An RNA of 207 nucleotides, treated with DMS and 2A3 and read out base by base. The 2A3 profile rests on 1,584 reads. Reactivities are given for positions 27 through 156. 2A3 adducts were read by reverse transcription with SuperScript II with manganese. 2A3 is a SHAPE reagent: it acylates the 2'-hydroxyl of flexible nucleotides of all four kinds. The DMS profile rests on 4,276 reads.
[RMDB]
RNA sequence: GGGAACGACUCGAGUAGAGUCGAAAACGUAAAGGGCGAGCUUUUGUCCGGAAUGGUUCCGCCGUGAUCGGGCCAUGCAAUAGUUGCCAACGAAAACUAUGCUCCGGUUGCUCAGGCAGCGUAACGCACAAUGGAACAACCUUCGGGUUGUUCCAAAACCUGAUGAUUACUUCGGUAAUCAUCAGGUAAAAGAAACAACAACAACAAC
Reactivity to DMS in 0.01 (KOAc 150mM, MgCl2 10mM, bicine 150mM(pH8.5), 24C), signal-to-noise 2, nucleotides 027 to 156: c070g000u000a110a100a140g000g020g030c010g000a080g030c030u000u000u000u000g010u010c030c010g020g010a180a060u000g010g010u000u000c010c020g060c100c110g000u000g010a090u000c020g000g000g010c010c000a050u010g040c050a090a130u000a080g040u000u000g000c020c040a090a140c120g000a100a100a070a040c010u000a050u000g000c000u020c000c010g030g000u010u000g040c010u020c070a090g000g010c030a090g000c070g020u000a060a140c070g040c050a090c090a110a210u010g010g010a010a030c010a020a030c010c010u000u000c300g050g020g030u000u000g010u010u020c000c000a000a000a040
Reactivity to 2A3 in 0.01 (KOAc 150mM, MgCl2 10mM, bicine 150mM(pH8.5), 24C), signal-to-noise 3, nucleotides 027 to 156: c020g000u050a010a060a030g090g030g000c040g010a050g010c060u090u170u190u190g040u110c000c010g030g020a050a050u030g000g000u250u300c020c020g030c020c060g080u160g040a150u090c010g030g000g000c010c030a040u080g000c010a020a150u010a050g010u000u020g120c080c050a060a060c110g080a040a030a030a020c010u000a010u060g030c040u000c040c010g040g020u020u090g040c010u020c030a040g090g000c000a030g020c010g050u090a030a020c050g000c050a050c030a070a200u080g000g000a000a000c010a000a000c000c000u020u090c120g020g000g000u000u000g000u010u000c000c000a000a050a000